[RMDB]
RNA sequence: GGGAACGACUCGAGUAGAGUCGAAAAGCUAUCGUACGCGAUAGCACUUGAGUCUUCGGACUCAAGACAAUUACGUACGCGUAAUUGACGUGAGACGUACGCGUCUCACGAACGCCAGUGCUACGGCACUGGCGAAAGUUCAUAUGCCCACCUUUGCUUGUCUCCGGGUGGAUGCCUCAUGGUGCUAUGAAUGCCUAUAAUUGAAAUAUUAUAGAUGCCUAAUUUUCCUCUCUUGAGGAAAAUUAGAUGCCUCCAAGGGAGAAGCUAACUAGCCGUUCGCGGCUAGUAAAAGAAACAACAACAACAAC
Reactivity to DMS in 0.01 (KOAc 150mM, MgCl2 10mM, bicine 150mM(pH8.5), 24C), signal-to-noise 1, nucleotides 027 to 266: g000c000u000a000u000c000g000u010a150c140g020c010g000a000u000a020g000c020a110c000u010u000g000a010g010u000c000u000u030c210g000g000a000c000u010c000a000a000g000a300c060a000a010u000u010a000c000g020u010a170c120g050c050g000u020a000a030u010u020g030a300c080g000u000g000a040g000a020c000g000u020a110c300g010c030g040u000c000u000c010a000c030g020a170a220c160g020c020c030a020g040u000g030c000u000a080c070g030g010c010a010c000u000g000g020c000g000a010a060a020g000u030u000c020a030u000a030u020g010c000c000c000a040c000c000u000u040u000g000c060u000u000g000u030c030u010c010c080g050g000g010u000g010g000a040u000g000c010c010u010c170a080u040g000g040u000g010c010u000a040u000g000a020a000u000g010c200c000u000a030u020a000a010u000u000g010a140a100a100u030a010u000u000a010u010a000g000a070u000g000c040c010u000a000a000u010u010u000u000c010c000u000c000u010c300u040u000g020a050g000g000a000a000a000a000u000u000a000g000a070u000g010c080c250u000c100c130a130a040g000g000g000a040g000a070a030g000c000u000a140
Reactivity to 2A3 in 0.01 (KOAc 150mM, MgCl2 10mM, bicine 150mM(pH8.5), 24C), signal-to-noise 2, nucleotides 027 to 266: g010c000u010a000u000c000g030u070a040c180g010c010g050a020u010a000g020c010a050c000u000u010g000a000g000u000c020u050u040c240g070g020a000c000u000c000a000a000g010a000c000a000a000u010u000a010c020g020u030a040c300g020c000g070u020a020a010u030u040g050a000c000g000u000g000a000g000a000c010g030u040a020c300g050c000g070u000c000u000c020a010c000g000a090a020c000g000c020c000a000g010u010g000c000u020a020c150g160g020c020a000c000u000g000g020c000g000a030a000a000g000u000u030c010a020u050a030u220g000c000c000c000a010c010c030u050u080u180g010c020u050u090g070u110c010u010c060c020g030g040g040u030g060g000a080u040g010c000c020u140c030a150u300g010g030u020g000c030u080a020u010g040a040a010u020g020c000c010u050a020u030a050a010u070u030g060a100a160a040u170a080u110u010a010u030a050g100a120u120g010c040c010u010a000a000u030u010u040u040c010c020u020c040u050c050u090u230g000a000g000g000a020a010a000a000u030u000a020g010a010u060g200c010c080u050c030c030a020a000g100g000g000a010g000a020a000g060c020u000a000

The record gives the reactivity of an RNA of 307 nucleotides to DMS and 2A3. For 2A3 the reverse transcriptase was SuperScript II with manganese. Values cover nucleotides 27 to 266. The DMS profile rests on 3,597 reads. For DMS the reverse transcriptase was MarathonRT. The RNA was probed in 150 mM KOAc, 10 mM MgCl2 and 150 mM bicine (pH 8.5) at 24 C. The data come from the RNA Mapping Database (RMDB), library POS240.